[RMDB]
RNA sequence: GGGAACGACUCGAGUAGAGUCGAAAAGAAAGAAAGAAAGUCAGGUCUUCAGCAGAAGCAGGGAGGUUCUCCCAGUGGUUUUCCUUGACUGUGAGGAACUAGCCUGCUGCUUUGCUCAGGAGUGAAACCCCUACUCAAAGUUCGCUUUGAGUAGGGGAAAAGAAACAACAACAACAAC
Reactivity to DMS in 0.01 (KOAc 150mM, MgCl2 10mM, bicine 150mM(pH8.5), 24C), signal-to-noise 3, nucleotides 027 to 126: g020a120a090a040g020a110a060a060g000a080a060a060g000u010c070a060g010g010u000c010u000u000c100a050g030c050a030g010a090a030g000c010a010g000g000g010a100g010g000u000u000c010u010c010c040c000a000g020u000g020g020u010u000u010u010c140c090u030u040g030a050c010u010g020u010g010a000g000g000a000a010c010u010a100g010c010c000u000g000c000u000g000c140u010u010u000g000c010u010c170a040g000g010a050g000u020g010a070a110a150
Reactivity to 2A3 in 0.01 (KOAc 150mM, MgCl2 10mM, bicine 150mM(pH8.5), 24C), signal-to-noise 3, nucleotides 027 to 126: g060a030a050a000g080a060a040a020g070a020a040a020g060u100c040a040g070g100u020c010u010u020c040a000g000c000a010g010a150a000g020c010a010g000g020g010a100g000g080u000u030c010u020c030c030c000a000g000u030g090g040u080u060u170u180c020c020u230u220g130a070c010u020g010u030g030a030g030g050a000a040c000u020a020g260c000c000u030g010c020u020g000c010u070u080u060g020c010u020c020a050g000g000a030g000u020g020a010a020a010